[RMDB]
An RNA of 177 nucleotides, treated with DMS and 2A3 and read out base by base. The RNA was probed in 150 mM KOAc, 10 mM MgCl2 and 150 mM bicine (pH 8.5) at 24 C. It was measured as part of the RMDB library OK2TRN. For DMS, 1,233 sequencing reads were counted. For DMS the reverse transcriptase was MarathonRT. Values cover nucleotides 27 to 126.
RNA sequence: GGGAACGACUCGAGUAGAGUCGAAAAUCUUCAAUUAAGUGCAAAAAACAGUUAAACAAUCCCAGUCAAUUUUGCUUGCAAUUGUCAUGUAUUCAAUUUGAUUGAAGUUUAAGCAGAGUCCAGAUUGCAACAACAACUGUUUCGACAGUUGUUGUUGAAAAGAAACAACAACAACAAC
Reactivity to DMS in 0.01 (KOAc 150mM, MgCl2 10mM, bicine 150mM(pH8.5), 24C), signal-to-noise 2, nucleotides 027 to 126: u000c020u000u000c030a030a040u000u000a020a060g020u000g020c110a000a030a090a100a070a030c060a070g010u010u000a090a080a070c090a060a070u000c020c060c040a110g000u010c100a070a060u000u010u000u000g010c040u000u000g040c090a070a050u000u010g030u010c100a080u000g010u020a050u000u000c110a040a030u010u010u010g010a010u000u030g000a010a020g010u010u000u000a070a100g030c030a060g010a080g010u000c020c050a070g000a120u000u010g000
Reactivity to 2A3 in 0.01 (KOAc 150mM, MgCl2 10mM, bicine 150mM(pH8.5), 24C), signal-to-noise 1, nucleotides 027 to 126: u000c000u050u070c000a000a060u050u050a100a030g070u020g020c050a070a000a140a000a140a070c040a030g080u150u130a080a060a000c000a050a040u010c020c000c020a000g000u020c010a010a070u040u160u080u160g010c090u030u050g000c010a000a150u030u030g020u080c020a050u100g060u100a090u060u160c040a080a060u000u040u100g040a040u000u000g050a010a030g020u000u020u080a050a020g020c070a000g010a000g070u000c030c000a000g030a100u050u240g060